[RMDB]
RNA sequence: GGGAACGACUCGAGUAGAGUCGAAAAACGGUGCGGAAGUUCGCGCUUCCGUGAAACGCGAAAAUCGGAAGGUGGCUGCAAGUCGCAUCGCAAAACCGCGGCAAGUGGAGUUAGCGAGAGGAGGCUGAAACCAUCCAACACUUCGGUGUUGGAUGAACCUACUCUAGCUAUUCGUAGCUAGAGUAGGAAAAGAAACAACAACAACAAC
Reactivity to 2A3 in 0.01 (KOAc 150mM, MgCl2 10mM, bicine 150mM(pH8.5), 24C), signal-to-noise 3, nucleotides 027 to 156: a000c020g010g000u030g000c020g020g020a040a020g040u090u120c020g070c000g000c070u020u000c010c010g000u030g070a090a070a030c130g040c030g150a070a020a000a050u070c010g010g030a020a000g130g030u020g030g000c070u130g000c150a050a030g020u050c000g000c020a020u020c000g000c020a080a090a010a000c010c010g040c010g050g030c100a080a080g030u060g060g010a050g000u060u090a030g040c030g020a010g000a040g040g000a010g020g000c030u050g040a090a020a020c020c000a000u000c000c000a000a000c000a000c010u020u090c200g110g000u000g000u000u000g010g000a000u000g000a000a000
Reactivity to DMS in 0.01 (KOAc 150mM, MgCl2 10mM, bicine 150mM(pH8.5), 24C), signal-to-noise 1, nucleotides 027 to 156: a040c020g010g080u000g000c010g000g000a100a070g040u000u000c080g080c140g000c010u020u000c000c070g030u000g050a020a040a040c080g020c010g000a090a070a140a140u000c030g000g020a070a110g010g040u000g010g000c020u000g030c070a060a070g020u010c050g000c020a070u000c060g020c000a070a070a090a080c040c040g020c100g010g000c070a060a100g020u000g000g000a200g000u010u000a100g030c030g010a100g050a120g000g030a030g010g000c000u000g000a130a070a120c110c010a010u000c020c000a010a000c000a010c000u000u000c300g100g020u000g000u010u000g000g000a020u000g010a060a070

The record gives the reactivity of an RNA of 207 nucleotides to 2A3 and DMS.
It was measured as part of the RMDB library M2RFPK.